[RMDB]
RNA sequence: GGGAACGACUCGAGUAGAGUCGAAAAGAUAUGGAACCCAAGGGAGCGACAUAUCGGAAACGAUAUGAUCGCGAGGAUCUUGUGGUUCCUAAGUCAAAGAACGAAUGUGGUUCGCCACAUUCGUUCAGUAUUUCACCUUCUUCGGAAGGUGAAAUACAAAAGAAACAACAACAACAAC
Reactivity to 2A3 in 0.01 (KOAc 150mM, MgCl2 10mM, bicine 150mM(pH8.5), 24C), signal-to-noise 1, nucleotides 027 to 126: g000a010u020a000u030g010g000a000a020c000c000c000a010a000g010g030g010a030g000c000g020a010c000a000u000a000u000c000g010g000a010a010a000c020g000a010u000a000u020g300a300u000c020g000c020g020a020g000g000a000u010c000u010u080g110u290g020g000u010u000c000c000u010a000a000g000u010c000a000a060a080g000a000a000c000g000a000a000u000g010u030g000g090u110u130c300g090c110c010a000c000a000u000u000c000g000u000u000c000a000
Reactivity to DMS in 0.01 (KOAc 150mM, MgCl2 10mM, bicine 150mM(pH8.5), 24C), signal-to-noise 2, nucleotides 027 to 126: g000a010u000a010u020g000g000a000a020c000c000c000a020a010g000g000g000a000g030c010g020a060c010a010u000a010u010c000g000g010a010a000a020c000g010a010u000a010u000g010a160u000c010g020c000g010a060g020g000a020u010c000u010u000g000u010g020g010u010u000c000c000u000a000a070g010u000c010a110a190a140g000a010a010c000g010a000a000u010g030u000g010g020u000u020c300g020c000c000a000c000a010u000u000c000g010u000u000c000a110